Structure probing data (DMS and 2A3) for a 207-nucleotide construct. As a SHAPE reagent, 2A3 marks flexible, mostly unpaired nucleotides at the ribose 2'-OH. For 2A3, 672 sequencing reads were counted.

RNA sequence: GGGAACGACUCGAGUAGAGUCGAAAAGUCAAGGCCAACUACGAAGCAGUCACAACGUUGUACAACUUGAUUAAACAGACACACGACGCAUACGGCAACGACCUACGCAAGGUCGGCUAUCAACUGUCCGAAGUCGAGUAUAUGGCUGCAAAGCUCGUCACAAAAGCGUUUUCGAACGCUUUUGUGAAAAAGAAACAACAACAACAAC
Reactivity to DMS in 0.01 (KOAc 150mM, MgCl2 10mM, bicine 150mM(pH8.5), 24C), signal-to-noise 1, nucleotides 027 to 156: g010u000c080a030a050g010g050c000c050a030a060c060u000a100c080g000a180a280g040c040a040g010u000c050a160c040a030a120c080g020u000u000g020u000a090c010a090a170c020u030u000g000a080u030u000a130a100a150c010a070g000a030c050a110c040a090c050g040a050c040g000c040a190u000a100c070g000g040c050a100a030c000g010a020c000c000u010a110c290g020c110a120a060g000g030u000c010g050g020c040u000a150u000c050a010a120c080u010g010u000c020c040g050a300a050g020u000c020g000a040g010u000a150u000a050u000g010g010c040u000g000c010a000a100a090g030c010u000c020g000
Reactivity to 2A3 in 0.01 (KOAc 150mM, MgCl2 10mM, bicine 150mM(pH8.5), 24C), signal-to-noise 2, nucleotides 027 to 156: g010u000c030a010a050g060g090c000c090a010a020c050u040a040c080g040a070a020g040c020a000g110u040c000a040c030a300a010c070g000u000u040g050u090a130c080a150a050c050u000u050g050a090u090u230a150a110a030c090a050g140a020c050a000c000a030c070g050a040c050g000c100a050u190a140c010g040g020c000a020a000c010g010a010c000c000u060a040c080g160c220a100a000g000g020u030c000g000g090c000u000a020u260c010a180a060c060u010g050u000c020c000g030a170a010g000u010c010g000a030g000u020a090u020a060u250g000g000c000u000g000c000a000a060a000g020c010u050c140g060